The record gives the reactivity of an RNA of 177 nucleotides to DMS and 2A3.
High 2A3 reactivity points to a flexible backbone, as in loops and unpaired stretches.
The RNA was probed in 150 mM KOAc, 10 mM MgCl2 and 150 mM bicine (pH 8.5) at 24 C.
For DMS the reverse transcriptase was MarathonRT.
It was measured as part of the RMDB library M2PK90.
For 2A3, 10,047 sequencing reads were counted.
Values cover nucleotides 27 to 126.
RNA sequence: GGGAACGACUCGAGUAGAGUCGAAAAUCAUUGGCUUCGCUGCGCGCUGCGUUGCCUAGGCUUCAGAUGCUUCGUACUGUUGCCAUCGUUGCAAUUUCCAAACGCUAAUGCGAAAGUGUGCAAACAAGCUACUCUUUAUCUUCGGAUAAAGAGUAGCAAAAGAAACAACAACAACAAC
Reactivity to DMS in 0.01 (KOAc 150mM, MgCl2 10mM, bicine 150mM(pH8.5), 24C), signal-to-noise 3, nucleotides 027 to 126: u000c140a150u000u000g020g030c010u010u000c020g000c020u010g000c030g010c050g010c030u000g000c030g020u000u000g030c010c030u000a070g010g000c010u000u000c060a080g040a050u000g010c030u000u010c040g000u030a130c160u040g020u000u000g000c040c010a060u000c070g010u000u000g000c030a030a110u000u010u000c010c010a070a070a180c050g000c010u000a060a130u000g010c020g010a080a060a060g000u000g020u010g010c020a090a090a070c300a060a080
Reactivity to 2A3 in 0.01 (KOAc 150mM, MgCl2 10mM, bicine 150mM(pH8.5), 24C), signal-to-noise 5, nucleotides 027 to 126: u110c020a030u020u090g010g000c010u010u000c010g010c060u110g000c020g000c000g010c020u010g000c000g010u000u010g000c010c000u020a050g030g000c010u040u010c050a110g010a060u020g020c000u020u040c030g090u120a230c100u210g020u040u010g050c100c000a010u020c010g000u010u030g000c040a070a050u000u040u000c000c000a030a040a020c020g020c030u170a240a040u290g010c010g060a060a020a010g030u040g010u010g030c010a040a060a020c040a050a030